RNA sequence: GGGAACGACUCGAGUAGAGUCGAAAACGCAGCGGUCAGCUGCUCGCCCGCCGCGUCGUUAUACGCGGACGCCGCGGCCUGCGCAUUGUGCAGCGCCUCGUUGACCCGCUGAGCCACCGCCUCGGCAGAUUUACUCGGUGUUCGCACCGAGUAAAUCAAAAGAAACAACAACAACAAC
Reactivity to DMS in 0.01 (KOAc 150mM, MgCl2 10mM, bicine 150mM(pH8.5), 24C), signal-to-noise 2, nucleotides 027 to 126: c190g010c060a030g010c000g020g000u000c110a120g010c020u000g000c020u000c110g000c020c040c040g000c000c020g000c020g000u000c070g010u030u000a110u010a060c120g020c010g000g000a060c050g030c090c020g000c100g000g030c020c050u000g000c030g020c170a140u010u000g030u000g030c010a030g010c110g020c030c050u000c060g000u000u000g000a160c040c020c040g010c030u000g000a070g010c020c040a100c070c060g010c090c010u000c050g010g010c060a130
Reactivity to 2A3 in 0.01 (KOAc 150mM, MgCl2 10mM, bicine 150mM(pH8.5), 24C), signal-to-noise 2, nucleotides 027 to 126: c020g000c020a040g040c050g030g200u170c090a060g030c020u010g000c000u030c030g020c000c010c000g000c010c000g000c000g020u030c030g010u040u070a180u040a220c120g060c030g070g010a000c030g030c000c010g040c000g000g000c020c020u040g000c050g010c090a220u150u300g070u080g050c010a020g000c000g010c040c000u040c020g050u050u100g040a070c030c020c020g000c030u030g010a020g010c040c040a060c040c060g050c030c000u020c000g030g000c030a050